[RMDB]
RNA sequence: GGGAACGACUCGAGUAGAGUCGAAAAUUUCCUUUCUCCUUAGGAAGUGUUAGAUCUCAUGAGUGGACUUAUCUGAGAUAACAGAAGGACACAGUUUAUGUAAUAAAUCCUAUUUUCCACUUUGCUGACUGUUAGCACUGCAGGUGUGAUUAGGGACCUGUAGGGGAUAGUUCGCUAUCCCCUACAGAAAAGAAACAACAACAACAAC
Reactivity to 2A3 in 0.01 (KOAc 150mM, MgCl2 10mM, bicine 150mM(pH8.5), 24C), signal-to-noise 3, nucleotides 027 to 156: u010u010u050c010c000u010u090u000c040u040c040c000u080u090a090g050g010a110a080g030u000g030u110u080a130g030a160u030c020u020c040a080u230g030a010g070u090g020g030a070c020u090u100a080u210c020u020g050a040g010a170u050a090a030c040a060g050a100a040g030g020a000c020a010c010a090g030u050u230u070a110u110g060u100a080a110u070a130a150a010u040c000c000u030a220u070u000u010u010c000c000a020c000u210u300u090g010c030u020g040a230c010u060g090u280u100a060g080c070a010c070u010g000c030a030g040g000u030g040u080g020a020u000u060a030g000g000g040a020c010
Reactivity to DMS in 0.01 (KOAc 150mM, MgCl2 10mM, bicine 150mM(pH8.5), 24C), signal-to-noise 2, nucleotides 027 to 156: u000u000u000c010c010u000u000u000c040u010c040c020u000u000a100g020g000a070a110g040u000g030u000u000a050g010a110u000c000u000c020a140u000g010a130g040u000g010g010a130c110u000u000a120u000c010u000g000a180g000a180u000a090a180c030a110g000a060a090g010g000a120c080a030c070a080g010u000u000u000a110u030g000u000a000a130u010a050a100a180u010c000c010u010a150u010u030u000u000c120c010a020c010u000u000u000g030c000u000g000a060c010u000g010u010u000a080g040c000a060c030u000g030c020a040g000g010u010g000u000g010a080u000u000a110g010g010g000a050c150
Chemical mapping of a 207-nucleotide RNA with 2A3 and DMS. The reactions ran in a buffer of 150 mM KOAc, 10 mM MgCl2 and 150 mM bicine (pH 8.5), at 24 C. The 2A3 profile rests on 1,338 reads. DMS adducts were read by reverse transcription with MarathonRT.